Chemical mapping of a 177-nucleotide RNA with 2A3 and DMS. The DMS profile rests on 8,764 reads. Values cover nucleotides 27 to 126. For DMS the reverse transcriptase was MarathonRT. The data come from the RNA Mapping Database (RMDB), library TTRDEL.
RNA sequence: GGGAACGACUCGAGUAGAGUCGAAAAGAUAUGGACCAGAACUACAGCGAACUCGCGUUGAAAUCGGAAACGAUGGAGCGAGGGAGCUGCUGGUCCUAAGUCAAAGAGAGGUCUUCGGACCUCUCAACAAUACUUCCCAGUUCGCUGGGAAGUAUUGAAAAGAAACAACAACAACAAC
Reactivity to 2A3 in 0.01 (KOAc 150mM, MgCl2 10mM, bicine 150mM(pH8.5), 24C), signal-to-noise 6, nucleotides 027 to 126: g030a010u070a040u130g000g000a000c000c030a010g030a090a060c230u300a080c230a000g000c000g000a030a020c000u000c010g010c000g210u290u080g020a060a050a010u010c010g010g030a060a040a020c010g000a010u030g030g030a030g000c000g000a010g000g000g000a000g000c000u000g000c000u000g000g000u000c000c000u000a040a010g030u010c030a020a280a010g010a000g000a000g000g000u000c010u090u140c300g100g000a000c000c000u000c000u000c000a000a000
Reactivity to DMS in 0.01 (KOAc 150mM, MgCl2 10mM, bicine 150mM(pH8.5), 24C), signal-to-noise 7, nucleotides 027 to 126: g010a030u000a300u010g000g000a010c000c000a000g000a100a040c080u020a300c010a000g010c000g010a300a300c000u000c000g020c000g020u010u000g010a080a130a010u000c000g010g010a080a070a130c000g010a020u000g010g000a110g010c000g000a020g000g000g010a300g010c000u000g000c000u000g010g000u000c000c000u000a010a070g010u010c030a080a100a150g000a010g000a010g000g000u000c000u000u020c200g020g000a010c000c000u000c000u000c000a020a070